[RMDB]
RNA sequence: GGGAACGACUCGAGUAGAGUCGAAAAGUCUAGCGAUUUAGGGAUCCGAUCCGGGUAGCAGAACUCAACUGCAUGAGUAGACACGCAAGUCGCGUAUUGGCCGACCGACCAAGGAUCUGCUAGACGAGGGAUAGUCCUAGUUCGCUAGGACUAUCCCAAAAGAAACAACAACAACAAC
Reactivity to DMS in 0.01 (KOAc 150mM, MgCl2 10mM, bicine 150mM(pH8.5), 24C), signal-to-noise 2, nucleotides 027 to 126: g020u000c000u020a000g030c040g010a130u010u010u000a190g000g020g030a060u000c030c000g000a170u010c000c000g000g030g000u000a160g030c020a090g010a070a070c100u010c110a070a120c120u000g010c240a130u000g000a150g020u000a110g030a090c070a030c060g000c030a130a090g020u000c170g020c020g050u000a130u010u020g020g000c050c040g000a010c060c020g020a120c060c010a080a180g010g000a040u010c010u010g030c010u000a000g040a000c020g000a040
Reactivity to 2A3 in 0.01 (KOAc 150mM, MgCl2 10mM, bicine 150mM(pH8.5), 24C), signal-to-noise 2, nucleotides 027 to 126: g010u060c000u010a030g000c020g040a060u090u010u180a150g020g070g000a010u030c020c000g000a060u010c020c000g050g060g040u040a020g000c020a020g000a100a010c020u030c090a080a120c070u110g000c120a060u050g010a020g080u050a010g070a020c060a010c050g000c090a100a130g150u060c020g010c020g000u010a150u170u140g110g060c050c010g030a050c000c000g010a020c020c040a100a070g000g000a000u000c080u080g000c000u000a000g000a000c000g000a010

Chemical mapping of a 177-nucleotide RNA with DMS and 2A3. 2A3 is a SHAPE reagent: it acylates the 2'-hydroxyl of flexible nucleotides of all four kinds. For DMS, 856 sequencing reads were counted. Conditions: 150 mM KOAc, 10 mM MgCl2 and 150 mM bicine (pH 8.5), 24 C. DMS adducts were read by reverse transcription with MarathonRT.